Structure probing data (DMS and 2A3) for a 177-nucleotide construct. For DMS, 4,870 sequencing reads were counted. Values cover nucleotides 27 to 126.

[RMDB]
RNA sequence: GGGAACGACUCGAGUAGAGUCGAAAAGCGGUCUGAACGCCAGAGCAGCCGCCGCGCCGCGCAGGCCGCUGCGAGCGCCGCCGAGGAUGCUGCCACACAGAAUGCAUUGCUACAGACGCAACGCGACCCACUCAUACAGUUUCGACUGUAUGAGUGGAAAAGAAACAACAACAACAAC
Reactivity to DMS in 0.01 (KOAc 150mM, MgCl2 10mM, bicine 150mM(pH8.5), 24C), signal-to-noise 6, nucleotides 027 to 126: g000c010g000g030u000c020u010g010a080a070c090g030c130c090a090g000a150g010c020a080g020c060c090g010c030c060g010c190g010c060c050g000c160g000c060a040g010g010c040c090g020c010u000g000c040g010a160g010c030g000c030c070g020c050c050g020a120g010g020a060u010g010c030u000g010c080c030a100c150a080c140a110g010a060a110u000g000c030a060u000u000g010c030u000a300c090a100g000a100c120g000c030a030a060c080g020c030g010a150c160
Reactivity to 2A3 in 0.01 (KOAc 150mM, MgCl2 10mM, bicine 150mM(pH8.5), 24C), signal-to-noise 5, nucleotides 027 to 126: g010c010g030g040u030c030u040g050a170a050c060g040c060c030a050g010a020g080c030a010g030c020c040g060c010c020g020c050g000c030c020g110c020g020c050a020g030g020c010c010g000c040u010g010c010g030a060g010c040g000c010c030g040c020c040g030a090g040g020a020u100g020c030u030g010c030c010a040c000a000c000a040g200a120a060u180g010c000a030u010u110g030c020u070a100c050a180g070a060c060g010c030a040a010c020g010c030g080a070c010